[RMDB]
RNA sequence: GGGAACGACUCGAGUAGAGUCGAAAAGGCGUAUCUGAUGAUGUGACGGUGAGUCGAGACGGUGAGAUGAAAAUCAACGGCAAGCUUAUCUAUGAUGGUAGAGAAAGAUCGCGAAAGCUUCAGAUCCAGGAUGGUACGAAGAUUUCCAUUCAGAUGGGAAUGAAAGUCUCUUCGGAGACUUUCAUUCAAAAGAAACAACAACAACAAC
Reactivity to DMS in 0.01 (KOAc 150mM, MgCl2 10mM, bicine 150mM(pH8.5), 24C), signal-to-noise 2, nucleotides 027 to 156: g030g030c010g030u000a050u010c040u000g010a120u000g010a080u000g020u000g010a190c060g040g050u000g000a120g020u000c060g020a170g030a050c040g020g030u030g000a100g000a110u010g010a110a100a090a150u020c050a030a070c040g030g000c010a070a080g010c050u010u010a110u000c030u000a060u020g040a130u000g030g030u000a040g000a100g030a120a050a160g000a100u020c060g100c030g030a070a080a150g000c080u010u000c020a060g040a120u010c000c010a130g000g020a040u000g010g040u000a050c020g000a050a140g020a170u000u010u010c000c000a080u000u000c040a060g010a180u000g010g010
Reactivity to 2A3 in 0.01 (KOAc 150mM, MgCl2 10mM, bicine 150mM(pH8.5), 24C), signal-to-noise 3, nucleotides 027 to 156: g060g000c040g040u070a060u030c050u060g030a010u010g000a010u050g090u080g030a060c020g070g000u050g000a090g020u050c030g020a040g010a030c020g010g040u020g000a030g000a020u040g090a050a060a040a080u070c060a070a020c030g030g000c050a050a040g010c010u080u130a050u020c030u060a040u110g060a040u060g030g010u090a020g010a000g030a060a130a010g020a030u090c020g010c020g120a040a080a020g030c010u060u040c030a000g010a100u030c000c000a010g090g020a050u060g040g010u030a020c050g020a030a070g050a060u120u050u000c110c000a040u100u170c020a010g120a180u270g100g040
This 207-nucleotide RNA was probed chemically with DMS and 2A3.
The 2A3 profile rests on 1,438 reads.
For 2A3 the reverse transcriptase was SuperScript II with manganese.
It was measured as part of the RMDB library OK3TST.
DMS adducts were read by reverse transcription with MarathonRT.
The reactions ran in a buffer of 150 mM KOAc, 10 mM MgCl2 and 150 mM bicine (pH 8.5), at 24 C.